[RMDB]
RNA sequence: GGGAACGACUCGAGUAGAGUCGAAAACUAUUUAUAGACAGAACAGUGGAAAACGUAUAUCGCUAUAAACCUUACACCCCGACUCUUCCAGUCGUACUAUUCCACAUAGGCGAGGCAUAAGCGAAAGCCUCCCGAGGUGAUUCGUCACCUCGGGAGGAAAAGAAACAACAACAACAAC
Reactivity to 2A3 in 0.01 (KOAc 150mM, MgCl2 10mM, bicine 150mM(pH8.5), 24C), signal-to-noise 1, nucleotides 027 to 126: c000u000a050u010u110u080a110u010a020g110a020c020a010g000a050a020c010a130g060u100g110g170a160a050a000a000c010g050u100a040u030a000u130c060g000c000u030a010u080a070a070a010c010c020u060u060a020c050a030c000c080c000c000g000a000c000u000c040u040u000c010c000a000g000u000c000g020u000a010c020u000a060u170u040c020c000a060c020a090u050a020g000g000c010g020a000g010g010c030a000u010a060a130g040c080g040a100a000a000g000
An RNA of 177 nucleotides, treated with 2A3 and read out base by base. It was measured as part of the RMDB library OK1LIB. Reactivities are given for positions 27 through 126. 2A3 adducts were read by reverse transcription with SuperScript II with manganese.